Notes
The record gives the reactivity of an RNA of 207 nucleotides to DMS and 2A3. For DMS, 4,276 sequencing reads were counted. It was measured as part of the RMDB library OK3TST.
RNA sequence: GGGAACGACUCGAGUAGAGUCGAAAAUGAGUACUUUUUUGUGACACAGGUCUACUGAUGGGAGAAAUGGAACUUCUUUUUGUGGGGGAUAACAUUUUGCCUAAUUGGAGUUCAAAUUGGAGUUUGCUUAAUUGGAGUUCAUGCUCCCUACAAUGAACGUGAUUUUAAAUUUCGAUUUAAAAUCACGAAAAGAAACAACAACAACAAC
Reactivity to DMS in 0.01 (KOAc 150mM, MgCl2 10mM, bicine 150mM(pH8.5), 24C), signal-to-noise 2, nucleotides 027 to 156: u000g020a150g000u000a070c020u010u000u000u010u010u010g010u020g010a100c040a080c060a110g000g030u010c050u000a070c060u010g000a160u010g020g000g000a070g000a040a040a080u000g010g010a080a120c040u000u000c010u000u000u000u010u010g010u010g000g000g030g040g020a090u000a040a190c040a170u000u000u000u000g030c090c030u020a050a100u000u000g000g010a130g000u000u000c040a040a040a110u000u000g010g020a160g000u000u000u000g010c020u010u000a060a100u000u000g020g010a090g040u000u010c060a070u000g000c020u000c010c000c050u010a060c070a090a080u010g010a090a160
Reactivity to 2A3 in 0.01 (KOAc 150mM, MgCl2 10mM, bicine 150mM(pH8.5), 24C), signal-to-noise 3, nucleotides 027 to 156: u110g010a030g070u170a130c060u050u080u120u070u160u160g030u080g040a030c030a010c010a090g060g020u040c060u150a100c010u120g040a080u080g030g030g000a020g000a020a130a050u070g040g020a050a030c010u030u050c040u100u160u030u130u200g060u130g050g030g000g000g010a010u040a040a020c010a010u050u100u070u100g050c000c000u070a070a050u050u090g050g020a000g010u060u140c030a040a000a040u020u040g010g020a040g040u090u080u080g060c030u030u100a030a030u070u070g030g000a030g000u020u040c000a020u110g000c010u040c000c020c010u020a060c050a100a140u170g020a070a000